[RMDB]
RNA sequence: GGGAACGACUCGAGUAGAGUCGAAAAGCUCGGAGACGAGCAAGGCUGACAAAACUGUGUCCCAACCUCCACGUGGUGUCGGCUGGAUAAUGCUGCAUUAUGUUGCAUUUAUCAACUGGGAACUAAACGCGGGUAUCCCAUUCGUGGGAUACCCGCGAAAAGAAACAACAACAACAAC
Reactivity to 2A3 in 0.01 (KOAc 150mM, MgCl2 10mM, bicine 150mM(pH8.5), 24C), signal-to-noise 2, nucleotides 027 to 126: g000c000u000c000g020g030a050g040a090c000g000a000g020c000a000a040g050g000c020u020g000a030c040a010a270a130a080c100u140g020u040g030u150c000c000c000a000a000c010c000u100c040c030a160c100g070u090g020g000u000g030u020c010g020g010c000u030g000g000a020u010a000a000u000g010c020u020g000c000a070u000u080a180u300g000u000u000g000c010a010u020u140u220a120u030c010a000a000c100u070g020g010g000a050a000c040u090a050a030a030
Record summary: The record gives the reactivity of an RNA of 177 nucleotides to 2A3. The data come from the RNA Mapping Database (RMDB), library OK1LIB. For 2A3, 734 sequencing reads were counted. 2A3 adducts were read by reverse transcription with SuperScript II with manganese. Values cover nucleotides 27 to 126.